[RMDB]
RNA sequence: GGGAACGACUCGAGUAGAGUCGAAAAUCGAUCGUAUAAUUCUCCGUUGCGGCGAUAAAUUUCUACCGCACCGCUACGUAAUAAAUACAGAUCAUGAAUUUGGUCACCAAUGUUAAGAAUGGUAGCGUGUACCACCGUCUUUCGAGACGGUGGUACAAAAAGAAACAACAACAACAAC
Reactivity to DMS in 0.01 (KOAc 150mM, MgCl2 10mM, bicine 150mM(pH8.5), 24C), signal-to-noise 1, nucleotides 027 to 126: u020c060g020a060u000c090g000u030a080u000a050a160u000u000c000u010c120c120g000u000u000g000c020g030g000c300g020a030u020a000a130a090u000u000u000c100u060a140c010c020g040c080a100c240c010g000c010u000a010c020g050u020a210a080u000a000a090a080u000a000c060a130g000a000u000c000a060u000g000a020a040u000u000u010g000g000u000c030a030c180c100a080a140u000g020u010u000a080a090g000a190a120u000g000g000u000a050g020c100g000
Reactivity to 2A3 in 0.01 (KOAc 150mM, MgCl2 10mM, bicine 150mM(pH8.5), 24C), signal-to-noise 1, nucleotides 027 to 126: u000c000g060a080u070c120g000u170a040u050a180a200u070u000c020u000c120c000g070u070u070g000c030g000g000c000g020a020u060a070a160a050u130u090u030c090u090a090c000c000g020c010a000c000c020g010c000u000a000c000g040u030a010a010u000a000a200a000u040a020c020a040g010a000u010c020a020u070g300a300a080u060u060u110g030g030u020c020a030c020c150a150a090u090g010u030u170a100a130g120a140a010u070g050g000u000a030g000c020g050
Annotation: This 177-nucleotide RNA was probed chemically with DMS and 2A3. It was measured as part of the RMDB library OK2TST. For DMS, 546 sequencing reads were counted. Conditions: 150 mM KOAc, 10 mM MgCl2 and 150 mM bicine (pH 8.5), 24 C.